An RNA of 207 nucleotides, treated with DMS and 2A3 and read out base by base. The data come from the RNA Mapping Database (RMDB), library OK3TST. Conditions: 150 mM KOAc, 10 mM MgCl2 and 150 mM bicine (pH 8.5), 24 C. DMS adducts were read by reverse transcription with MarathonRT. 2A3 adducts were read by reverse transcription with SuperScript II with manganese. For 2A3, 3,041 sequencing reads were counted.
RNA sequence: GGGAACGACUCGAGUAGAGUCGAAAAUGGAUGUAUGGGCCUCUUGAGCCAGAGGAGACAACAGCAGAAAGCUCUGCGGCUGAUGGGACCGAGCAGGAGAAGGGCCGGCGGAGGCUGGGGCAACAACGCACUUGCCCACUGUGAAGGGCCUGUGUGAGAUGUCUAAUGAGUUCGCUCAUUAGACAUCAAAAGAAACAACAACAACAAC
Reactivity to DMS in 0.01 (KOAc 150mM, MgCl2 10mM, bicine 150mM(pH8.5), 24C), signal-to-noise 2, nucleotides 027 to 156: u010g010g010a080u010g000u010a060u000g020g040g020c010c010u010c050u000u020g000a100g040c040c020a140g030a090g140g000a120g010a090c050a050a080c050a120g030c000a100g000a120a150a200g020c080u000c030u000g010c110g010g000c010u000g030a120u000g000g040g010a060c000c030g000a150g030c090a110g010g010a100g000a090a150g010g010g040c050c040g010g000c110g010g010a060g010g000c020u010g000g010g000g040c050a050a040c030a060a140c000g040c050a050c030u010u000g000c000c000c000a070c070u020g000u020g030a170a210g010g000g040c010c030u000g000u000g020u010g020a200
Reactivity to 2A3 in 0.01 (KOAc 150mM, MgCl2 10mM, bicine 150mM(pH8.5), 24C), signal-to-noise 4, nucleotides 027 to 156: u080g020g030a020u040g020u150a100u100g010g020g040c020c010u050c050u090u100g070a030g020c040c020a030g030a020g110g040a010g040a030c050a090a050c020a100g060c020a030g110a120a090a000g030c050u020c030u080g020c030g040g020c030u070g020a080u110g020g010g010a020c030c010g020a010g020c040a030g020g050a050g020a080a040g020g010g000c010c000g040g020c040g020g020a030g040g000c050u020g000g000g000g000c010a060a020c010a040a000c100g010c020a010c010u010u020g000c000c060c000a070c050u090g030u050g120a130a080g000g000g010c000c020u020g010u000g000u000g010a100